Chemical mapping of a 207-nucleotide RNA with 2A3.

[RMDB]
RNA sequence: GGGAACGACUCGAGUAGAGUCGAAAAAACAAACAUCAAAUCGCAUAGCAAAGAGUCAAAAAAAUAGAGAGCUUUGCGAGACCUACCAAGGGUGAAGAGAUACCAUCCAAUGAGCUGAAGAGAAAUCGAGAGCUCACGGCGUUCGCGCCGUGAGCAAUCAUUUAGCAUCGUUCGCGAUGCUAAAUGAAAAAGAAACAACAACAACAAC
Reactivity to 2A3 in 0.01 (KOAc 150mM, MgCl2 10mM, bicine 150mM(pH8.5), 24C), signal-to-noise 2, nucleotides 027 to 156: a020a000c180a040a080a010c060a080u160c050a060a080a040u050c010g000c000a000u040a030g000c020a000a110a130g070a090g050u120c100a260a180a020a020a060a020a020u300a100g080a030g020a030g030c000u020u040u010g000c000g000a020g010a010c010c010u060a070c050c050a010a080g010g000g020u040g020a070a010g040a000g020a040u110a090c030c020a010u000c020c000a020a050u040g010a060g040c030u040g060a040a020g020a020g060a070a080a010u120c040g000a040g010a010g220c010u000c000a000c000g000g000c000g010u020u060c170g000c000g020c000c000g000u000g000a000g010c000a000a010